[RMDB]
RNA sequence: GGGAACGACUCGAGUAGAGUCGAAAAGAUAUGGAAUCGCAUAGACAUGCUUUGACCCUCGGAAACGAGGGUUCCGGAGCAACAGCUAUGACGAUUCCUAAGUCAAAGACGUGCCUUCGGGCACGUCCACGGUAUACUAGUUCGCUAGUAUACCGUGAAAAGAAACAACAACAACAAC
Reactivity to DMS in 0.01 (KOAc 150mM, MgCl2 10mM, bicine 150mM(pH8.5), 24C), signal-to-noise 9, nucleotides 027 to 126: g010a040u000a300u000g000g000a010a000u000c000g010c010a010u000a010g010a060c110a290u000g020c010u000u000u010g010a060c000c000c000u000c000g000g000a110a090a150c000g000a020g010g000g010u000u000c090c090g010g000a010g000c010a050a090c300a170g000c000u000a000u000g000a120c000g010a020u000u000c000c000u000a010a080g000u000c040a110a120a130g000a010c000g020u000g000c000c000u000u010c260g030g000g020c000a000c000g010u000c000
Reactivity to 2A3 in 0.01 (KOAc 150mM, MgCl2 10mM, bicine 150mM(pH8.5), 24C), signal-to-noise 7, nucleotides 027 to 126: g010a010u070a040u160g000g010a000a000u000c000g000c010a000u010a010g060a120c080a150u260g010c000u030u010u060g020a020c010c000c000u000c010g010g030a080a060a050c010g000a010g020g000g000u010u020c010c030g030g010a000g000c030a060a160c060a160g040c000u010a010u030g150a130c000g000a000u000u000c000c000u010a050a010g030u010c050a170a080a080g000a000c000g000u000g000c000c000u030u130c300g060g000g000c000a000c000g000u000c000